About this RNA:
An RNA of 177 nucleotides, treated with 2A3 and DMS and read out base by base. DMS adducts were read by reverse transcription with MarathonRT. Values cover nucleotides 27 to 126. The RNA was probed in 150 mM KOAc, 10 mM MgCl2 and 150 mM bicine (pH 8.5) at 24 C. 2A3 adducts were read by reverse transcription with SuperScript II with manganese. Source: RMDB library OK1LIB, as collected in RNAgym.

RNA sequence: GGGAACGACUCGAGUAGAGUCGAAAAGAACGCUAUGCUGAUUCUAUUAGCGUAUGGAAUCAGUCUCUACUUAUACGCUAAUGAGUAGAUUCAAGCUUAGCGUAGUUUGAAGACUAGCAUAGUGUUAGAUAGGUAUGUUAUUCGUGACAUAUCUAUCAAAAGAAACAACAACAACAAC
Reactivity to 2A3 in 0.01 (KOAc 150mM, MgCl2 10mM, bicine 150mM(pH8.5), 24C), signal-to-noise 9, nucleotides 027 to 126: g080a020a000c000g000c000u000a000u000g000c010u010g010a040u090u000c020u020a020u000u010a010g010c000g000u010a000u010g030g050a030a050u070c010a020g060u000c020u000c000u040a070c020u070u090a000u000a010c000g000c000u000a000a000u040g070a000g030u070a010g010a040u000u010c010a010a010g000c000u020u040a020g050c010g020u000a000g000u000u010u010g010a010a000g040a050c010u010a000g000c000a000u000a000g000u000g000u000u010a020
Reactivity to DMS in 0.01 (KOAc 150mM, MgCl2 10mM, bicine 150mM(pH8.5), 24C), signal-to-noise 9, nucleotides 027 to 126: g010a020a010c010g010c000u000a000u000g000c000u000g010a070u010u010c020u020a020u000u010a020g010c030g010u000a010u000g000g000a070a090u020c050a050g000u000c020u000c010u000a240c100u030u020a040u000a000c000g000c000u000a000a010u000g000a050g020u010a080g000a300u000u000c010a010a020g010c030u000u010a070g010c090g060u010a020g000u000u000u000g010a020a010g000a080c100u020a020g010c000a010u000a000g000u000g000u000u000a060